[RMDB]
RNA sequence: GGGAACGACUCGAGUAGAGUCGAAAAUAGGCAUAAUCCCCAUCAUUUGCGGCGGCACGCGGUGCGCAGCCAUCAUGUCGUCGCGGCUGACAUUUUUGAUAUUCAAAAACUCAUCCUUCGCCGCGACUUCUGACAAUGGGAUGAUCUGAAGCCCGUCGUGCUGAUUGAAGUUCGCUUCAAUCAGCACAAAAGAAACAACAACAACAAC
Reactivity to 2A3 in 0.01 (KOAc 150mM, MgCl2 10mM, bicine 150mM(pH8.5), 24C), signal-to-noise 1, nucleotides 027 to 156: u170a030g140g000c050a030u100a170a050u100c030c000c000c000a050u050c030a110u050u190u180g100c120g110g000c000g050g000c010a010c000g300c030g230g000u120g000c180g070c060a030g020c000c000a030u030c010a000u040g000u030c000g000u010c000g000c010g000g000c060u100g020a010c040a120u020u020u000u000u000g150a180u160a210u270u250c050a000a030a030a050a010c060u000c070a060u170c020c120u260u070c020g020c000c000g010c030g020a040c000u030u000c020u060g060a060c030a080a030u030g000g060g020a030u100g020a030u050c070u020g020a130a040g050c060c040c040g140u040c010